[RMDB]
RNA sequence: GGGAACGACUCGAGUAGAGUCGAAAAGAAGAGAAGUGAGUAAACGCCUAUGCGGUAUAAGCACAGCCCGUCAAAAGGCGUGCGGCGAGGGCACCGGAGGCUGUGCUUAUAACUGGGCCCUCGAAGACCCAUGGGUACGAUUCGUCGUACCCAUGGGAAAAGAAACAACAACAACAAC
Reactivity to DMS in 0.01 (KOAc 150mM, MgCl2 10mM, bicine 150mM(pH8.5), 24C), signal-to-noise 2, nucleotides 027 to 126: g000a110a110g000a110g010a080a020g030u010g010a110g050u060a070a190a050c140g010c000c040u010a070u030g020c040g000g010u070a060u010a010a010g000c000a000c000a010g020c040c000c060g000u050c170a050a120a120a000g000g000c030g050u000g000c170g000g000c040g020a040g000g000g000c000a010c000c040g030g030a040g000g010c000u000g000u000g000c000u000u000a030u000a060a030c060u000g010g000g000c000c040c000u030c000g010a130a090g000a220
Reactivity to 2A3 in 0.01 (KOAc 150mM, MgCl2 10mM, bicine 150mM(pH8.5), 24C), signal-to-noise 3, nucleotides 027 to 126: g060a010a000g090a000g000a130a040g120u110g070a010g020u130a030a220a040c000g000c000c000u090a090u180g090c080g050g010u070a090u040a100a000g000c000a000c010a020g000c010c010c000g100u090c050a130a100a020a080g090g020c050g010u010g010c040g090g020c040g030a030g000g060g000c130a190c070c000g060g020a050g000g000c000u000g000u000g020c000u010u020a040u000a030a000c000u030g000g010g000c000c000c000u010c000g000a010a010g040a060